[RMDB]
RNA sequence: GGGAACGACUCGAGUAGAGUCGAAAAGCGUACUACAAGCCUAAAUAGAGCAACAGCUGCACGAACUACAUGUCCCAAAUAGGACAUGCGUGCAGACAUGCUCUAUAUAAGGCUUGUAUCGCAAACAACACAGCCGUAGUUCGCUACGGCUGUGUUGGGGUACUAUCACCUUCGGGUGAUAGUACCCAAAAGAAACAACAACAACAAC
Reactivity to 2A3 in 0.01 (KOAc 150mM, MgCl2 10mM, bicine 150mM(pH8.5), 24C), signal-to-noise 2, nucleotides 027 to 156: g000c010g060u080a010c000u020a000c010a000a000g000c000c000u060a130a070a020u000a020g010a010g010c010a010a110c030a220g050c010u000g010c020a030c000g020a110a080c070u190a020c220a010u000g020u040c080c030c000a250a290a180u300a100g000g000a000c000a000u000g010c000g050u020g000c010a000g010a000c000a000u010g000c010u050c010u000a000u000a000u010a000a000g000g000c000u000u000g010u000a000u010c000g000c000a010a020a020c000a000a000c000a000c000a000g000c000c000g000u000a000g030u060u110c190g000c170u000a000c000g000g000c000u000g000u000g010u000u000g000